This 177-nucleotide RNA was probed chemically with 2A3 and DMS. Values cover nucleotides 27 to 126. Conditions: 150 mM KOAc, 10 mM MgCl2 and 150 mM bicine (pH 8.5), 24 C. DMS adducts were read by reverse transcription with MarathonRT. The DMS profile rests on 1,362 reads. Source: RMDB library OK2TST, as collected in RNAgym. The 2A3 profile rests on 1,358 reads. 2A3 adducts were read by reverse transcription with SuperScript II with manganese.
RNA sequence: GGGAACGACUCGAGUAGAGUCGAAAAGCGGAGGCCUGUCAUUGCAGGCACCCGUGAGGAGGAUGUGACCAGUGACCGUGGGUCCCAGCGGUGACCCUCACACAGAAUCAGAGCAAAACACCAGUGACGUGUAUAGCUCGUUCGCGAGCUAUACACGAAAAGAAACAACAACAACAAC
Reactivity to 2A3 in 0.01 (KOAc 150mM, MgCl2 10mM, bicine 150mM(pH8.5), 24C), signal-to-noise 1, nucleotides 027 to 126: g070c010g000g030a000g060g050c020c010u000g040u090c130a300u090u300g000c010a000g000g020c010a040c010c000c010g010u050g050a100g090g050a010g040g010a080u140g010u050g070a050c020c060a040g010u020g050a020c000c000g010u040g020g020g030u000c000c010c000a010g020c020g090g000u000g010a000c000c000c000u030c000a050c000a000c000a030g060a020a030u070c000a040g070a020g020c040a050a000a070a040c050a040c030c030a050g050u050g160a010
Reactivity to DMS in 0.01 (KOAc 150mM, MgCl2 10mM, bicine 150mM(pH8.5), 24C), signal-to-noise 2, nucleotides 027 to 126: g020c050g000g010a150g020g010c000c010u000g010u000c190a200u020u030g000c000a000g010g000c020a000c000c000c020g010u020g010a100g000g010a110g000g000a120u000g010u000g020a040c110c160a090g000u010g040a010c030c000g010u000g000g000g020u000c000c000c010a300g010c040g010g010u020g000a040c030c040c110u000c020a050c060a040c050a080g020a170a050u020c040a090g010a050g000c100a040a110a110a060c050a040c030c020a090g010u000g010a070